[RMDB]
RNA sequence: GGGAACGACUCGAGUAGAGUCGAAAAGAUGGAGUGAGUGAUGGAGUGGGUUGCCAACUGUCAUUACUCCACUUGGUGCAGAAUAACUGUCAGAAAUCUAUUCACAUAUGCCCAAAGAAGUCUGCCCGAUAGACUUUUACUUCGGUAAAAGUCUAUCAAAAGAAACAACAACAACAAC
Reactivity to DMS in 0.01 (KOAc 150mM, MgCl2 10mM, bicine 150mM(pH8.5), 24C), signal-to-noise 3, nucleotides 027 to 126: g020a100u010g000g000a080g010u000g010a030g010u000g000a020u010g000g010a140g050u000g000g000g030u010u020g030c010c010a070a070c010u000g010u010c000a070u000u000a050c010u000c010c010a100c050u010u000g010g050u010g040c050a060g000a050a050u000a050a090c140u010g000u000c180a090g010a060a110a090u010c080u000a050u010u000c070a090c070a090u000a180u010g010c020c000c000a040a060a150g000a110a200g000u000c020u000g010c020c020c060
Reactivity to 2A3 in 0.01 (KOAc 150mM, MgCl2 10mM, bicine 150mM(pH8.5), 24C), signal-to-noise 3, nucleotides 027 to 126: g070a080u030g010g000a000g000u090g030a020g030u030g000a000u030g030g070a200g200u060g010g050g090u230u150g300c020c000a020a000c030u000g020u020c000a000u000u000a010c010u000c000c010a020c000u000u050g070g000u180g000c030a020g030a110a040u080a140a080c060u120g110u190c070a040g130a040a070a030u050c050u080a100u070u090c000a020c000a080u160a030u110g020c000c010c020a040a050a010g040a040a010g030u010c030u040g040c000c000c000